[RMDB]
RNA sequence: GGGAACGACUCGAGUAGAGUCGAAAACUUGAGUAAACUAUGCAGCCUGUAGCUCCACCUGAGAAGGUGUAAAGAAUCCGGGAGGCCACAAACCAUGGAAGCUGUACGCAUGGCGUAGUGGACUAGCGCAUUAUAUAAACUUCGGUUUAUAUAAUGCAAAAGAAACAACAACAACAAC
Reactivity to 2A3 in 0.01 (KOAc 150mM, MgCl2 10mM, bicine 150mM(pH8.5), 24C), signal-to-noise 9, nucleotides 027 to 126: c020u070u110g020a020g050u150a050a080a070c080u050a050u180g020c020a020g040c010c010u070g040u100a020g020c010u020c020c000a010c000c000u040g010a050g020a120a030g020g000u010g000u020a030a030a010g060a020a040u030c030c000g030g020g010a050g040g040c010c000a050c020a050a130a020c020c010a030u040g020g020a100a040g050c050u080g070u130a050c050g020c090a060u060g040g000c030g020u040a020g010u020g020g030a040c030u040a040g050c020
Reactivity to DMS in 0.01 (KOAc 150mM, MgCl2 10mM, bicine 150mM(pH8.5), 24C), signal-to-noise 9, nucleotides 027 to 126: c030u000u020g010a070g010u010a050a060a060c060u000a040u010g020c030a100g010c010c030u000g000u010a060g000c030u000c130c000a040c010c010u010g000a170g010a130a030g000g010u000g000u010a060a090a100g010a100a090u010c030c010g010g000g000a090g010g020c050c040a040c090a060a130a180c040c010a050u010g000g000a080a070g010c050u010g000u010a050c210g020c020a040u020g010g000c030g000u000a070g010u000g000g000a070c030u000a050g000c270

Chemical mapping of a 177-nucleotide RNA with 2A3 and DMS. For DMS the reverse transcriptase was MarathonRT. Conditions: 150 mM KOAc, 10 mM MgCl2 and 150 mM bicine (pH 8.5), 24 C.